[RMDB]
RNA sequence: GGGAACGACUCGAGUAGAGUCGAAAAAACUGGGACAUCGGGCCGGUGCACUGGCACCCCGGGGAGUCGACGUGGAAAUUGCCUGGAAUCCGGAAUUCCUGCGCGAGGGCUUCGCGGUGCACGACACUGAAGCAUGUGAGUUCGCUCACAUGCUUCAAAAAGAAACAACAACAACAAC
Reactivity to 2A3 in 0.01 (KOAc 150mM, MgCl2 10mM, bicine 150mM(pH8.5), 24C), signal-to-noise 2, nucleotides 027 to 126: a000a000c070u120g020g040g000a000c010a100u040c100g040g040g000c010c010g030g030u020g000c060a040c180u100g020g050c070a100c030c010c010c010g050g010g020g030a000g080u080c070g080a120c050g010u020g000g020a050a020a030u080u080g110c000c010u000g030g090a000a080u110c020c000g010g000a000a010u000u000c020c000u030g010c010g000c050g010a170g000g110g000c000u010u060c050g000c020g010g000u010g000c010a020c050g050a020c000a010c050
Reactivity to DMS in 0.01 (KOAc 150mM, MgCl2 10mM, bicine 150mM(pH8.5), 24C), signal-to-noise 2, nucleotides 027 to 126: a100a080c050u010g010g000g000a060c010a100u020c060g020g040g030c010c010g040g040u000g000c050a080c070u020g010g020c070a060c030c020c130c030g020g000g010g000a050g000u000c010g010a140c000g000u000g000g000a090a000a020u000u010g010c030c010u000g050g000a040a100u000c000c060g000g000a100a060u020u000c000c000u000g000c040g000c040g010a050g000g000g020c010u010u000c020g000c110g020g030u000g000c050a060c070g000a170c300a080c150